[RMDB]
RNA sequence: GGGAACGACUCGAGUAGAGUCGAAAAAUCGUCCCCACAUAGCAGCUCCGGGAGCCCCCUUCAAAAAUGACCGGAGGGGGAGCUAGGAGCGUGGGGGACCCAGUGGAGCCAUGGGAUGCUUCUCCCGGGAAGUUAUAUUCUUCGGAAUAUAACUUCCAAAAGAAACAACAACAACAAC
Reactivity to DMS in 0.01 (KOAc 150mM, MgCl2 10mM, bicine 150mM(pH8.5), 24C), signal-to-noise 1, nucleotides 027 to 126: a080u020c150g000u020c000c000c020c010a070c070a220u010a120g030c230a200g000c000u000c000c000g010g030g020a060g010c000c000c000c000c000u000u000c000a010a050a150a110a130u020g000a090c270c170g000g000a000g010g000g000g000g000a000g000c020u000a100g040g010a000g000c030g020u000g000g020g000g010g000a040c030c010c000a110g010u020g010g020a060g030c030c060a210u050g020g000g000a100u000g020c020u000u000c020u000c000c000c030g050
This 177-nucleotide RNA was probed chemically with DMS. Reactivities are rounded to 0.1 and cut off at 0 and 3. For DMS the reverse transcriptase was MarathonRT. It was measured as part of the RMDB library VIROID. The RNA was probed in 150 mM KOAc, 10 mM MgCl2 and 150 mM bicine (pH 8.5) at 24 C.